[RMDB]
RNA sequence: GGGAACGACUCGAGUAGAGUCGAAAAUUCAACCCACUGCUUCCUGACUCGCUCUACUCCGUGGAAGCACGCUCACAAAGGCACGUGGGCCGUGGCCCGGCUGGGUCGGCUGAAGAACUGCGGAUGGGCCACUAUAACUCUUCGGAGUUAUAGUGGCAAAAGAAACAACAACAACAAC
Reactivity to DMS in 0.01 (KOAc 150mM, MgCl2 10mM, bicine 150mM(pH8.5), 24C), signal-to-noise 2, nucleotides 027 to 126: u020u030c110a100a190c010c000c030a080c130u000g000c050u010u010c050c030u010g010a130c120u000c030g000c070u000c000u010a060c080u010c000c070g000u000g000g020a110a090g010c050a040c020g020c020u000c040a020c050a060a020a210g010g020c150a070c120g030u000g020g000g020c030c050g040u000g020g030c020c020c020g020g000c180u000g000g000g000u000c040g030g040c170u000g010a140a030g020a210a100c050u000g010c010g000g010a140u000g000g030
Reactivity to 2A3 in 0.01 (KOAc 150mM, MgCl2 10mM, bicine 150mM(pH8.5), 24C), signal-to-noise 1, nucleotides 027 to 126: u070u000c000a090a070c000c010c010a030c020u110g000c010u090u010c000c010u020g090a070c010u010c060g040c030u030c050u000a040c020u000c050c020g050u160g000g010a090a040g140c040a000c020g030c000u050c020a000c040a080a260a040g260g030c060a030c120g020u030g000g000g000c010c030g130u110g020g060c000c030c000g100g000c070u200g010g060g000u010c010g000g050c020u090g020a070a060g030a180a060c060u160g010c040g070g070a110u080g100g110
An RNA of 177 nucleotides, treated with DMS and 2A3 and read out base by base. Conditions: 150 mM KOAc, 10 mM MgCl2 and 150 mM bicine (pH 8.5), 24 C. For 2A3, 1,053 sequencing reads were counted. For DMS, 1,173 sequencing reads were counted. Reactivities are rounded to 0.1 and cut off at 0 and 3. Values cover nucleotides 27 to 126. For 2A3 the reverse transcriptase was SuperScript II with manganese.